RNA sequence: GGGAACGACUCGAGUAGAGUCGAAAACUCGCGCAUCGCGCGAUCGGGCAUCGCCGCCUCGAUCCGGUAUUCGACGCGCUGCAGCGGCGCGACGCGCAUCAGGUACUGGUUCGGCGUGAUCGCCGAAAUUAAAUUAGUAGUUCGCUACUAAUUUAAUAAAAGAAACAACAACAACAAC
Reactivity to 2A3 in 0.01 (KOAc 150mM, MgCl2 10mM, bicine 150mM(pH8.5), 24C), signal-to-noise 8, nucleotides 027 to 126: c010u020c040g000c010g020c010a060u050c050g000c000g000c010g030a020u060c020g000g010g000c020a040u090c090g080c140c070g010c020c010u090c050g010a010u000c010c010g020g030u110a200u090u250c080g070a040c010g010c010g000c060u130g020c060a070g060c010g090g000c020g000c000g020a020c020g000c000g010c010a050u100c040a010g130g030u100a090c050u100g090g000u030u020c010g010g000c020g040u110g130a140u180c040g010c010c010g010a030a030
Reactivity to DMS in 0.01 (KOAc 150mM, MgCl2 10mM, bicine 150mM(pH8.5), 24C), signal-to-noise 9, nucleotides 027 to 126: c040u000c080g020c020g020c010a050u000c040g010c010g020c010g010a020u000c020g000g000g010c020a070u000c250g010c170c150g010c040c010u010c030g010a020u000c020c010g010g000u000a110u010u010c130g010a090c030g010c010g010c030u000g020c130a170g010c020g010g010c020g010c010g010a030c050g010c020g020c010a090u000c120a070g010g020u000a070c080u000g010g010u000u000c000g010g010c010g020u000g000a110u010c050g020c000c010g010a010a040